[RMDB]
RNA sequence: GGGAACGACUCGAGUAGAGUCGAAAAGAAAGAAAGAACGGAACGCGUUGUUUCGAUGAGGAUUCCCCGAGGUGCUGCCACCUCUCCCGUUAAGUCGGUCGGACCUCAUGGCAACGACCGUCCUGAACCAAGUAAAAUUUUUCGAAAUUUUACUUGGAAAAGAAACAACAACAACAAC
Reactivity to 2A3 in 0.01 (KOAc 150mM, MgCl2 10mM, bicine 150mM(pH8.5), 24C), signal-to-noise 5, nucleotides 027 to 126: g070a020a070a010g130a030a040a020g050a060a010c030g030g020a110a030c080g010c050g100u010u030g060u020u100u100c060g020a020u040g010a020g040g030a120u130u160c020c010c010c020g000a010g000g010u050g030c210u200g140c170c010a000c020c000u010c030u010c030c000c000g030u070u090a070a050g150u060c020g020g020u090c060g020g010a060c000c000u040c030a040u080g030g000c020a020a020c030g020a010c020c010g010u030c010c010u020g000a020a010
Reactivity to DMS in 0.01 (KOAc 150mM, MgCl2 10mM, bicine 150mM(pH8.5), 24C), signal-to-noise 8, nucleotides 027 to 126: g020a110a060a080g010a060a060a040g000a050a050c030g010g000a110a080c210g010c050g010u000u010g010u000u000u010c020g010a070u010g000a050g000g000a170u010u000c000c010c110c160g010a020g000g020u010g010c200u020g000c190c010a060c000c000u000c010u020c140c010c000g000u030u020a090a100g020u020c000g010g010u030c120g000g000a140c010c010u010c060a040u010g010g000c090a050a050c020g000a060c010c010g010u000c030c010u000g000a120a200
Structure probing data (2A3 and DMS) for a 177-nucleotide construct. The reactions ran in a buffer of 150 mM KOAc, 10 mM MgCl2 and 150 mM bicine (pH 8.5), at 24 C.